RNA sequence: GGGAACGACUCGAGUAGAGUCGAAAAAGACGUACGGAAACCAUCCGCCAUCCGAAACGUACGAGACAGCAUGGAUUACGUGUAUCUGAGGAUGUACAAUACCUCUCCCAUCCGAAACGUACGUUAGACCAACGGAUGGGAAAGCAUGCUAUACGACCUAGGAAAGGAUAUUCGUAUCCUUUCCUAGAAAAGAAACAACAACAACAAC
Reactivity to 2A3 in 0.01 (KOAc 150mM, MgCl2 10mM, bicine 150mM(pH8.5), 24C), signal-to-noise 7, nucleotides 027 to 156: a000g060a010c030g000u030a010c000g050g040a090a060a050c050c040a060u030c040c020g020c050c040a090u030c030c010g050a090a070a010c040g010u060a030c030g000a020g040a060c060a000g020c000a010u030g030g060a100u110u130a080c070g050u080g040u110a080u080c060u080g020a020g050g020a020u040g040u080a030c060a060a090u090a200c010c020u060c010u020c000c000c000a020u000c000c010g070a100a080a050c020g010u050a020c010g010u050u070a050g050a050c010c020a020a020c010g000g000a000u000g000g000g000a010a000a000g010c010a000u040g010c000u050a010u080a150c090g060a060c040
Reactivity to DMS in 0.01 (KOAc 150mM, MgCl2 10mM, bicine 150mM(pH8.5), 24C), signal-to-noise 4, nucleotides 027 to 156: a110g010a040c020g010u000a040c000g020g020a140a100a210c080c040a080u010c030c030g020c040c040a090u010c060c020g000a080a070a130c040g050u000a050c050g000a180g000a190c080a100g020c030a040u000g010g010a190u000u000a050c080g030u000g020u010a070u000c050u000g030a160g040g020a100u010g040u000a060c070a140a110u010a050c100c000u010c040u000c010c010c000a020u000c020c000g000a030a100a110c040g010u010a050c080g030u000u000a080g020a130c030c000a070a280c010g000g000a010u000g000g000g000a020a020a060g000c040a060u000g000c040u000a100u010a090c040g030a140c100

This 207-nucleotide RNA was probed chemically with 2A3 and DMS. The RNA was probed in 150 mM KOAc, 10 mM MgCl2 and 150 mM bicine (pH 8.5) at 24 C. The DMS profile rests on 7,511 reads. Reactivities are rounded to 0.1 and cut off at 0 and 3. For 2A3, 6,577 sequencing reads were counted. DMS adducts were read by reverse transcription with MarathonRT. The data come from the RNA Mapping Database (RMDB), library OK3TST.